This 177-nucleotide RNA was probed chemically with DMS and 2A3.
Reactivities are rounded to 0.1 and cut off at 0 and 3.
Values cover nucleotides 27 to 126.

[RMDB]
RNA sequence: GGGAACGACUCGAGUAGAGUCGAAAAAUAAGCACUGUGCUAAAAUUACAGAAACUGGGGCACUGUCUUGGUUUUUGUAAUAAUGCUAGCAGAGUACACACAGGAAGGAAAUUGAAACUGCACCCGGUCUUAAAUACUACUUCGGUAGUAUUUAAGAAAAAGAAACAACAACAACAAC
Reactivity to DMS in 0.01 (KOAc 150mM, MgCl2 10mM, bicine 150mM(pH8.5), 24C), signal-to-noise 7, nucleotides 027 to 126: a090u030a100a120g010c060a060c020u010g010u000g000c020u000a030a080a110a030u000u000a000c000a010g010a000a010a010c000u000g000g000g000g010c010a130c240u050g010u010c000u000u000g010g010u000u000u000u000u000g000u000a000a000u000a060a080u010g000c160u000a020g010c000a030g010a060g020u000a050c050a100c120a120c050a040g000g010a070a080g020g010a050a070a080u010u000g000a090a070a070c040u000g000c100a100c010c000c010g010g010
Reactivity to 2A3 in 0.01 (KOAc 150mM, MgCl2 10mM, bicine 150mM(pH8.5), 24C), signal-to-noise 7, nucleotides 027 to 126: a000u130a050a040g040c030a000c050u050g010u030g120c010u080a120a070a040a030u000u000a000c000a000g010a010a010a000c010u000g000g000g010g000c070a130c300u300g020u010c010u000u010g010g000u000u000u000u000u000g000u000a010a000u050a030a020u090g060c040u020a010g000c000a000g010a010g080u080a020c040a000c010a010c010a060g070g060a090a050g060g060a060a110a050u080u060g020a100a080a020c020u040g000c010a060c010c000c010g020g010